[RMDB]
RNA sequence: GGGAACGACUCGAGUAGAGUCGAAAAUGGUAAGAGAUCUCGGGCUGGGUCCCCCUGUUUUUCAUAUGACCAACUAUCUCACAGUGAACAUGAGUGAUGACUAUCGGAGAUGUCUUUUAGCGGUAGGCCUAGUACAUACGUUCGCGUAUGUACUAGGAAAAGAAACAACAACAACAAC
Reactivity to DMS in 0.01 (KOAc 150mM, MgCl2 10mM, bicine 150mM(pH8.5), 24C), signal-to-noise 5, nucleotides 027 to 126: u010g010g010u000a070a080g000a090g000a060u000c030u000c070g010g010g010c070u010g010g010g010u000c030c040c020c040c040u000g000u010u010u000u000u000c100a070u000a080u010g010a090c050c050a080a090c100u010a090u000c030u000c030a070c120a090g010u000g000a050a060c110a080u000g000a090g010u000g010a070u010g000a060c060u010a060u000c060g010g000a070g000a060u000g000u000c020u000u000u010u010a080g010c040g000g000u000a050g010g000
Reactivity to 2A3 in 0.01 (KOAc 150mM, MgCl2 10mM, bicine 150mM(pH8.5), 24C), signal-to-noise 4, nucleotides 027 to 126: u070g010g010u090a090a010g040a020g000a080u020c030u020c050g030g020g000c020u090g050g050g080u070c000c000c000c010c020u020g080u050u080u000u000u040c050a050u090a070u220g040a030c010c010a020a050c010u040a060u050c000u010c010a040c010a030g060u060g100a100a010c040a080u110g020a040g050u050g040a060u070g030a040c010u030a030u060c030g050g000a050g010a050u060g080u080c010u030u110u010u040a030g030c030g000g010u000a010g060g000